Structure probing data (2A3 and DMS) for a 177-nucleotide construct. Reactivities are given for positions 27 through 126. 2A3 is a SHAPE reagent: it acylates the 2'-hydroxyl of flexible nucleotides of all four kinds. The RNA was probed in 150 mM KOAc, 10 mM MgCl2 and 150 mM bicine (pH 8.5) at 24 C. Source: RMDB library RFMREP, as collected in RNAgym.

[RMDB]
RNA sequence: GGGAACGACUCGAGUAGAGUCGAAAACACUGUCCCCACAUUCAGCCCCGUGAAAUUAAUGUACUGGUGCACAAUCCAGUCUCUCCCACAUGAAAGCGAAGUCCCCGUGGAGCUUUACUGCAGCCUGCGUAUAGGCAAAGUUCGCUUUGCCUAUACGAAAAGAAACAACAACAACAAC
Reactivity to 2A3 in 0.01 (KOAc 150mM, MgCl2 10mM, bicine 150mM(pH8.5), 24C), signal-to-noise 2, nucleotides 027 to 126: c040a010c040u060g060u090c000c000c010c020a010c000a020u110u090c020a010g010c000c000c010c020g000u030g040a050a070a090u110u080a050a040u100g030u100a020c020u020g000g010u030g010c100a030c010a120a050u000c000c000a000g050u000c000u000c000u010c040c060c000a030c000a040u110g040a080a030a000g040c010g020a050a020g060u040c010c010c000c000g020u040g010g020a020g010c000u050u060u060a060c040u040g030c010a010g060c010c000u050g000
Reactivity to DMS in 0.01 (KOAc 150mM, MgCl2 10mM, bicine 150mM(pH8.5), 24C), signal-to-noise 4, nucleotides 027 to 126: c100a090c080u010g000u010c030c000c010c070a080c100a110u000u000c080a070g020c040c000c010c040g000u010g010a080a070a080u000u010a080a080u010g020u010a030c010u010g010g000u010g030c160a080c220a150a090u010c010c020a030g010u000c030u000c090u000c020c000c010a060c100a060u010g000a090a060a050g010c020g000a100a120g010u000c020c000c010c020g020u010g020g020a110g010c040u010u010u000a060c090u010g010c040a060g010c020c030u010g010